[RMDB]
Notes
The record gives the reactivity of an RNA of 207 nucleotides to 2A3.
RNA sequence: GGGAACGACUCGAGUAGAGUCGAAAACAAAGGAAGAACACGAGUAAAGAUGAUGAAGCAGGGAUAAGGCUAAAAUGAAAUUUGUGAUCUGAUCCACAUACAAGCACAGUGUAGUACAGCUGGAAUAUAGAGAAGAGCUUGAAGACUUAUGAGCAAACGUAUUUUAUCGCUUCGGCGAUAAAAUACGAAAAGAAACAACAACAACAAC
Reactivity to 2A3 in 0.01 (KOAc 150mM, MgCl2 10mM, bicine 150mM(pH8.5), 24C), signal-to-noise 2, nucleotides 027 to 156: c030a010a080a000g040g000a020a040g060a050a060c050a000c080g150a050g060u210a100a050a070g040a060u190g000a030u150g070a080a000g010c030a000g010g030g130a080u070a060a030g010g020c020u020a050a050a040a040u150g040a130a030a070u080u060u030g070u070g060a120u050c080u040g020a120u020c040c000a020c000a030u120a020c030a040a000g010c010a000c010a060g000u030g010u130a050g010u000a060c010a010g000c030u040g050g010a010a050u190a010u040a180g040a010g020a170a010g030a000g030c010u040u110g040a060a020g030a010c020u040u050a020u180g080a020g000c070a140a080a000